[RMDB]
Chemical mapping of a 177-nucleotide RNA with DMS and 2A3. For 2A3 the reverse transcriptase was SuperScript II with manganese. For DMS the reverse transcriptase was MarathonRT. For DMS, 3,129 sequencing reads were counted. For 2A3, 1,571 sequencing reads were counted.

RNA sequence: GGGAACGACUCGAGUAGAGUCGAAAAGGGCUCGACGUGCAGAUCGAGCAGACGGACGCCGCGGCCGGUGCGCUGCCUGGCCUGUCCGAGCCCGCGGCCAAGGCGCUGGUCGAGGCCGCCGGCGGGCCGCUUCUCAGCUUUUCGAAGCUGAGAAGCGAAAAGAAACAACAACAACAAC
Reactivity to DMS in 0.01 (KOAc 150mM, MgCl2 10mM, bicine 150mM(pH8.5), 24C), signal-to-noise 3, nucleotides 027 to 126: g000g010g010c000u000c010g000a070c040g020u020g040c170a150g000a200u000c010g000a040g030c000a040g000a100c060g010g010a100c040g000c020c020g020c040g010g010c020c000g010g020u010g010c140g010c030u010g030c090c060u000g010g000c020c030u000g020u000c040c020g010a080g000c020c020c080g020c020g000g000c010c000a050a150g020g000c030g000c120u000g010g020u000c030g010a230g000g000c020c020g010c070c060g030g020c010g010g010g030c040
Reactivity to 2A3 in 0.01 (KOAc 150mM, MgCl2 10mM, bicine 150mM(pH8.5), 24C), signal-to-noise 2, nucleotides 027 to 126: g100g030g000c010u020c000g040a060c040g100u240g090c110a030g030a300u060c020g010a010g050c020a010g020a020c010g030g010a010c010g000c010c010g060c000g000g070c030c000g060g160u170g020c110g000c010u110g030c010c040u060g010g000c000c020u060g020u000c030c010g010a010g040c020c040c020g000c030g040g000c000c000a050a050g030g090c040g000c170u130g100g050u150c060g010a040g020g020c020c010g000c000c000g060g000c000g000g020g030c040